[RMDB]
RNA sequence: GGGAACGACUCGAGUAGAGUCGAAAAUAUCUUUGAUGGCAAAAGACACAUCUCAGAAGACGGAAGUACGAUAUAUCUUGGAGUGGAGAGGUGGUUCCUCGACGAUGUCGCUAAACAUCUCUGGGAAGAGCACGGAGAAAGCCUAAAAUGGAGAGAGGGGUACAAUUAACUUCGGUUAAUUGUACCCAAAAGAAACAACAACAACAAC
Reactivity to DMS in 0.01 (KOAc 150mM, MgCl2 10mM, bicine 150mM(pH8.5), 24C), signal-to-noise 1, nucleotides 027 to 156: u030a050u000c010u010u000u020g020a080u020g090g030c030a100a060a010a110g000a130c050a040c020a100u000c000u010c040a080g020a080a270g020a080c000g030g000a020a080g010u000a040c020g010a000u000a040u010a100u000c050u000u000g030g000a130g040u020g020g020a090g030a130g000g040u000g030g010u000u000c000c010u000c120g030a020c060g040a040u040g030u010c050g030c130u000a080a060a070c030a010u000c000u060c000u030g020g020g020a050a130g000a080g050c100a070c120g000g010a120g010a130a010a070g040c010c000u000a020a030a050a150u020g010g000a110g000a150g050a120g010
Reactivity to 2A3 in 0.01 (KOAc 150mM, MgCl2 10mM, bicine 150mM(pH8.5), 24C), signal-to-noise 2, nucleotides 027 to 156: u140a020u010c010u020u050u060g020a040u060g030g050c020a030a080a090a060g020a030c050a010c010a140u030c040u030c060a060g010a090a010g030a040c050g020g040a070a030g040u100a050c040g010a040u030a030u020a040u200c070u030u100g080g000a020g010u060g010g020a050g010a010g030g030u040g000g030u040u010c010c000u020c000g020a040c090g020a040u030g020u030c050g000c180u090a080a060a000c010a010u000c000u000c020u050g050g000g000a030a000g040a020g030c040a020c040g010g000a000g000a060a050a010g000c000c000u060a070a090a070a050u080g030g020a030g000a000g020a010g090
This 207-nucleotide RNA was probed chemically with DMS and 2A3. The 2A3 profile rests on 1,480 reads. For 2A3 the reverse transcriptase was SuperScript II with manganese. The reactions ran in a buffer of 150 mM KOAc, 10 mM MgCl2 and 150 mM bicine (pH 8.5), at 24 C. It was measured as part of the RMDB library OK3TST.